[RMDB]
RNA sequence: GGGAACGACUCGAGUAGAGUCGAAAAAUGCCAGUUUGCAUUGCUAUUUACCGAUCAGUUGUCCAAGCAAUCGCGUAUUGGCUAUGGACAUCAGCGGUUCUGCCGCGUACGCUCACCAAUGUCACCGGUUUUACUGAUGAUUCGUCAUCAGUAAAACAAAAGAAACAACAACAACAAC
Reactivity to DMS in 0.01 (KOAc 150mM, MgCl2 10mM, bicine 150mM(pH8.5), 24C), signal-to-noise 6, nucleotides 027 to 126: a040u020g000c020c040a090g000u010u010u010g020c040a030u010u000g010c050u000a070u030u010u010a080c040c030g020a090u050c110a120g020u000u000g000u010c030c030a030a030g000c010a010a010u010c080g010c240g020u040a020u010u000g000g000c020u010a070u000g010g000a030c010a020u000c060a120g010c030g000g000u010u010c110u020g000c020c000g000c030g000u010a030c080g000c030u010c050a070c040c040a080a070u000g000u010c050a090c080c080g000
Reactivity to 2A3 in 0.01 (KOAc 150mM, MgCl2 10mM, bicine 150mM(pH8.5), 24C), signal-to-noise 9, nucleotides 027 to 126: a000u140g030c020c010a040g050u060u100u110g040c030a030u040u050g020c020u090a120u140u190u090a080c040c020g060a100u140c070a060g050u080u060g020u010c020c010a020a000g000c000a020a020u030c090g040c100g290u240a030u020u030g120g000c010u050a260u050g010g000a000c000a020u030c020a020g030c000g040g000u060u040c050u110g030c010c010g030c020g020u060a030c050g010c030u030c010a070c010c020a050a070u080g050u080c020a030c080c030g030